The record gives the reactivity of an RNA of 207 nucleotides to 2A3 and DMS.
It was measured as part of the RMDB library M2RFOK.
2A3 adducts were read by reverse transcription with SuperScript II with manganese.
DMS adducts were read by reverse transcription with MarathonRT.

[RMDB]
RNA sequence: GGGAACGACUCGAGUAGAGUCGAAAAGCGGGGCUUGAAACGCGGGUAGCGCGCACGCCCGGCGAAGAAGUUCGCAUACGCGGUGCGCUGGUGCCGAAGUGUCUGCUGCAACGGCACGCUCGACACCUAGAACAUACCGUAUUCGUACGGUAUGUAAUCUGCUAAAAAGGUUCGCCUUUUUAGCAGAAAAAGAAACAACAACAACAAC
Reactivity to 2A3 in 0.01 (KOAc 150mM, MgCl2 10mM, bicine 150mM(pH8.5), 24C), signal-to-noise 3, nucleotides 027 to 156: g020c030g000g010g000g010c030u080u130g080a070a080a030c080g000c020g040g010g040u100a050g080c030g000c010g010c010a020c020g010c000c020c010g010g010c010g000a020a020g060a030a020g130u020u020c010g010c040a010u040a140c050g010c070g060g010u020g010c000g000c040u070g010g030u020g000c000c000g010a060a020g000u020g000u040c070u100g060c080u120g040c020a040a030c030g000g000c000a000c030g030c050u010c010g010a010c000a000c010c000u010a030g040a090a010c000a000u000a000c010c000g000u010a020u010u050c120g020u010a000c000g000g000u000a000u000g000u000a010a050
Reactivity to DMS in 0.01 (KOAc 150mM, MgCl2 10mM, bicine 150mM(pH8.5), 24C), signal-to-noise 2, nucleotides 027 to 156: g000c050g000g020g050g030c060u000u000g010a150a060a100c050g030c030g000g000g020u000a080g020c010g010c000g050c010a050c070g020c010c050c030g000g050c020g000a030a080g000a130a160g000u000u010c020g020c050a270u010a100c040g030c060g040g010u010g010c000g030c030u020g030g030u010g020c020c000g020a050a130g020u000g010u000c040u000g020c080u010g000c070a040a170c150g000g000c040a040c010g040c080u000c000g010a050c020a020c010c000u000a110g000a120a090c000a000u010a010c010c000g010u000a030u000u010c300g050u000a010c000g020g020u000a000u030g010u000a020a060